This 177-nucleotide RNA was probed chemically with 2A3. The 2A3 profile rests on 677 reads.

RNA sequence: GGGAACGACUCGAGUAGAGUCGAAAAGCUCGGAGACGAGCAAGGCUGACAAAACGCUGUCCCUACCUCCACGUGGUGUCGGCUGGAUAAUGCUGCAUUAUGUUGCAUUUAUCAACUGGGAAGAAAACCCAUCCACCGUCUUCGGACGGUGGAUGGGAAAAGAAACAACAACAACAAC
Reactivity to 2A3 in 0.01 (KOAc 150mM, MgCl2 10mM, bicine 150mM(pH8.5), 24C), signal-to-noise 1, nucleotides 027 to 126: g000c000u000c000g030g010a070g000a000c010g000a000g000c010a000a030g020g050c000u000g000a000c010a010a090a020a000c090g020c120u080g100u060c000c060c000u010a020c000c030u030c010c040a010c010g030u030g000g070u050g040u040c000g010g080c020u020g000g010a010u030a010a030u020g000c030u010g040c020a070u090u080a170u300g010u030u020g030c020a000u030u030u110a010u000c000a000a040c030u010g000g050g000a010a070g040a010a050a000a030